[RMDB]
RNA sequence: GGGAACGACUCGAGUAGAGUCGAAAAUCAUCCAAGUUCGCUUGGAUGAAACGGUACUGAAGCUAAAAACGAUCCGAGGCAUCAGUACCAUAAAAGGAUCGACAGCCUGCAAAUUCGUUUGCAGGAAGGUUGAGCUUAAAUUCGUUUAAGCUCAACCAAAAGAAACAACAACAACAAC
Reactivity to 2A3 in 0.01 (KOAc 150mM, MgCl2 10mM, bicine 150mM(pH8.5), 24C), signal-to-noise 3, nucleotides 027 to 126: u010c000a000u010c010c000a010a000g020u020u140c220g030c150u000u000g010g010a010u010g000a000a010a000c060g000g000u010a010c010u010g010a020a010g000c040u150a200a060a050a030a060c030g000a010u000c010c000g040a060g030g020c000a010u000c000a000g010u000a000c000c000a000u040a000a020a000a020g010g000a010u010c010g030a040c030a010g080c000c000u000g000c010a010a010a050u070u060c210g070u060u020u000g000c000a000g000g020a010a010
Reactivity to DMS in 0.01 (KOAc 150mM, MgCl2 10mM, bicine 150mM(pH8.5), 24C), signal-to-noise 2, nucleotides 027 to 126: u000c000a010u000c020c000a000a000g010u020u010c210g020c010u000u000g000g010a000u000g020a000a040a070c200g000g010u000a010c000u000g000a030a050g020c010u010a030a040a050a070a080c000g000a010u000c030c000g000a130g000g010c020a050u010c000a020g040u010a010c000c000a050u020a010a040a110a070g000g000a010u000c000g010a300c210a180g000c000c010u000g000c010a000a000a040u010u000c200g000u000u000u000g010c000a020g010g000a020a010